[RMDB]
Chemical mapping of a 177-nucleotide RNA with 2A3 and DMS. For 2A3 the reverse transcriptase was SuperScript II with manganese.
RNA sequence: GGGAACGACUCGAGUAGAGUCGAAAAGAUAUGGACCUUGGUAGGGAGCUGAUAUCGGAAACGAUAUACAGCGAAGAACUACGAGGUCCUAAGUCAAAACAAGCGUACGGUUCGCCGUACGCUUGAAGUGUCGUUAAAGGUUCGCCUUUAACGACACAAAAGAAACAACAACAACAAC
Reactivity to 2A3 in 0.01 (KOAc 150mM, MgCl2 10mM, bicine 150mM(pH8.5), 24C), signal-to-noise 1, nucleotides 027 to 126: g010a000u010a020u070g000g000a010c000c020u010u050g300g000u110a010g040g040g170a090g010c010u000g030a000u000a000u000c010g000g040a000a020a000c010g000a000u000a000u170a300c000a000g000c060g000a130a030g060a020a010c040u000a000c020g020a000g000g020u000c000c010u000a000a000g010u010c000a030a020a090a190c030a020a010g030c010g000u000a000c020g030g110u050u130c300g050c090c000g000u030a000c000g000c000u000u000g000a000a010
Reactivity to DMS in 0.01 (KOAc 150mM, MgCl2 10mM, bicine 150mM(pH8.5), 24C), signal-to-noise 1, nucleotides 027 to 126: g010a000u000a050u010g000g000a010c000c010u000u000g040g080u020a060g010g000g000a300g010c010u010g010a020u010a000u000c000g040g000a070a050a050c000g000a000u000a010u000a170c040a010g020c010g020a090a120g030a090a160c030u010a000c000g000a010g000g020u010c000c000u000a000a040g010u000c010a210a100a110a300c000a020a000g020c000g000u020a000c000g000g020u000u020c300g040c010c000g000u000a000c000g010c000u000u000g000a040a030